Structure probing data (2A3 and DMS) for a 177-nucleotide construct. For DMS, 8,566 sequencing reads were counted. 2A3 adducts were read by reverse transcription with SuperScript II with manganese. The reactions ran in a buffer of 150 mM KOAc, 10 mM MgCl2 and 150 mM bicine (pH 8.5), at 24 C.
[RMDB]
RNA sequence: GGGAACGACUCGAGUAGAGUCGAAAAGAUAUGGAGUGUAUGCACCCACUUCCUCGUUGAAAGUUCGGUUGUCGGAAACGACAACCGAACUGGAGAGGAGUGGUUUAGCGUAUACACUCCUAAGUCACAAUACCAAUAACUUCGGUUAUUGGUAUUGAAAAGAAACAACAACAACAAC
Reactivity to 2A3 in 0.01 (KOAc 150mM, MgCl2 10mM, bicine 150mM(pH8.5), 24C), signal-to-noise 3, nucleotides 027 to 126: g030a030u080a070u230g010g000a020g000u000g000u000a010u020g020c020a050c000c020c000a000c000u300u270c020c000u000c010g230u280u090g100a110a060a010g000u000u000c000g030g010u000u000g000u000c000g020g030a080a090a130c010g000a000c000a010a010c000c000g020a000a000c010u000g000g000a020g000a000g010g020a000g000u010g020g010u020u090u180a020g010c000g000u040a000u010a020c000a000c000u000c000c000u000a080a010g000u020c000a000
Reactivity to DMS in 0.01 (KOAc 150mM, MgCl2 10mM, bicine 150mM(pH8.5), 24C), signal-to-noise 4, nucleotides 027 to 126: g000a050u000a300u010g000g000a020g020u000g010u000a000u000g020c000a100c110c010c010a010c010u000u010c000c000u000c010g000u010u020g000a240a170a030g010u000u000c000g020g000u000u000g010u010c000g000g010a120a100a210c010g010a020c010a010a000c000c000g010a000a000c000u000g000g000a040g010a040g000g010a030g020u000g000g000u010u000u010a080g030c060g030u000a020u000a010c000a010c000u000c000c000u000a010a060g000u000c030a280
The data come from the RNA Mapping Database (RMDB), library TTRINS.